[RMDB]
Conditions: 150 mM KOAc, 10 mM MgCl2 and 150 mM bicine (pH 8.5), 24 C. The record gives the reactivity of an RNA of 177 nucleotides to 2A3 and DMS. DMS adducts were read by reverse transcription with MarathonRT. For 2A3 the reverse transcriptase was SuperScript II with manganese. The data come from the RNA Mapping Database (RMDB), library TTRDEL.
RNA sequence: GGGAACGACUCGAGUAGAGUCGAAAACGGUACUUCGGUACCGAAAAAAGAUAUGGAUUCAGAGCCGGUAUCGGAAACGAUACUCGGUAGUCUGGUCCUAAGUCAAAAACAGCUGUUCGCAGCUGAAUCCAUACAGAUAGUUCGCUAUCUGUAUGGAAAAAGAAACAACAACAACAAC
Reactivity to 2A3 in 0.01 (KOAc 150mM, MgCl2 10mM, bicine 150mM(pH8.5), 24C), signal-to-noise 6, nucleotides 027 to 126: c010g000g000u010a010c010u060u110c300g140g000u010a000c000c010g090a060a020a010a000a000a010g050a010u090a040u160g030g000a030u300u300c020a010g000a010g020c000c000g000g020u000a000u010c000g040g030a070a070a040c000g000a000u000a000c110u090c120g000g000u020a020g080u000c000u000g000g010u000c000c000u020a160a030g050u040c050a010a010a010a160a210c010a000g020c000u030g080u130u170c300g020c190a010g000c010u010g020a010a080
Reactivity to DMS in 0.01 (KOAc 150mM, MgCl2 10mM, bicine 150mM(pH8.5), 24C), signal-to-noise 6, nucleotides 027 to 126: c010g010g010u000a000c000u000u030c200g050g010u000a000c000c000g000a000a020a090a120a080a040g000a020u010a300u000g010g000a020u000u010c010a010g020a090g000c010c000g010g010u000a000u000c000g000g000a110a080a140c000g000a010u000a010c000u020c010g010g010u000a020g010u000c000u000g000g000u000c000c000u000a030a070g000u020c020a080a070a100a110a160c020a010g000c010u000g020u000u010c190g010c020a010g020c000u000g010a080a060